Chemical mapping of a 207-nucleotide RNA with 2A3 and DMS. The reactions ran in a buffer of 150 mM KOAc, 10 mM MgCl2 and 150 mM bicine (pH 8.5), at 24 C.
[RMDB]
RNA sequence: GGGAACGACUCGAGUAGAGUCGAAAAAUGAGAUCCCAGCUUGCACACUGUGCUAAUUUGAGAUUCUCAUGCCUCCUACUUGGAGAGAUCUGGACUAGAAGUCAGGGCAUCUGACUCUGCCAGCCACAAAACGUACAAGGCUUCGGCCUUGUACGAACGAAGUAUGACUGUUCGCAGUCAUACUUCGAAAAGAAACAACAACAACAAC
Reactivity to 2A3 in 0.01 (KOAc 150mM, MgCl2 10mM, bicine 150mM(pH8.5), 24C), signal-to-noise 6, nucleotides 027 to 156: a000u020g000a000g000a000u000c010c000c010a000g000c030u020u040g010c000a020c020a080c210u300g000u010g030c040u070a070a120u070u050u070g040a060g000a030u300u020c000u000c010a010u060g040c020c020u010c010c000u110a230c090u120u220g020g010a030g010a020g020a120u030c000u000g000g030a100c050u110a070g020a150a010g090u000c000a000g020g060g160c100a120u100c110u000g000a010c000u000c000u010g000c000c000a020g030c010c010a120c020a040a100a110a030c010g000u000a000c000a000a000g000g000c000u030u090c160g060g000c000c000u000u000g000u000a000c000g000a000a000
Reactivity to DMS in 0.01 (KOAc 150mM, MgCl2 10mM, bicine 150mM(pH8.5), 24C), signal-to-noise 2, nucleotides 027 to 156: a040u000g010a050g020a060u000c010c020c010a030g010c150u000u010g000c000a020c010a200c180u010g000u000g050c010u000a010a070u000u010u000g000a060g000a050u000u010c000u000c010a030u000g000c070c030u000c000c000u010a130c130u000u000g040g010a120g000a100g010a100u010c030u000g020g000a050c030u010a070g010a130a010g020u010c010a020g000g020g020c190a170u000c040u000g000a030c010u000c020u000g000c010c010a060g000c070c040a080c130a050a070a100a130c010g000u000a000c000a010a020g000g010c000u000u000c300g040g010c010c000u020u000g000u000a000c010g000a010a070